RNA sequence: GGGAACGACUCGAGUAGAGUCGAAAAAAGAUAUGGAAUGUUGUAGUUGCCAGCGUAUCCGAAGAACAAACCUCGGAAACGAGGUUUGGGAGGAUACGGGCACUCUACACUGCAUUCCUAAGUCAAAGCAUUAUGCAUCGUUCGCGAUGCAUAAUGCAAAAGAAACAACAACAACAAC
Reactivity to 2A3 in 0.01 (KOAc 150mM, MgCl2 10mM, bicine 150mM(pH8.5), 24C), signal-to-noise 1, nucleotides 027 to 126: a010a010g180a070u140a050u110g010g000a000a000u010g000u080u030g000u140a020g000u050u020g020c010c030a090g040c300g000u000a010u000c000c030g200a300a080g000a040a000c000a000a000a000c020c000u020c000g000g060a120a070a020c020g010a000g000g000u000u000u000g000g000g010a030g000g000a020u000a000c000g020g010g010c020a030c040u020c000u000a010c060a000c060u130g030c000a000u000u000c010c000u020a170a010g050u070c050a110a110a000
Reactivity to DMS in 0.01 (KOAc 150mM, MgCl2 10mM, bicine 150mM(pH8.5), 24C), signal-to-noise 2, nucleotides 027 to 126: a070a100g010a020u040a300u000g000g000a040a030u010g020u040u000g030u000a020g000u010u000g020c020c020a170g040c000g000u000a020u010c000c020g010a140a130g000a170a200c030a000a010a000c000c000u000c020g010g000a070a040a180c010g000a000g000g000u000u000u000g000g010g020a050g000g010a000u010a000c000g000g000g000c010a200c250u000c010u000a010c030a050c300u000g020c010a000u000u010c000c000u000a030a140g010u000c010a120a070a100
Structure probing data (2A3 and DMS) for a 177-nucleotide construct. The DMS profile rests on 1,106 reads. The 2A3 profile rests on 2,330 reads. The data come from the RNA Mapping Database (RMDB), library TTRDES. Conditions: 150 mM KOAc, 10 mM MgCl2 and 150 mM bicine (pH 8.5), 24 C. 2A3 adducts were read by reverse transcription with SuperScript II with manganese.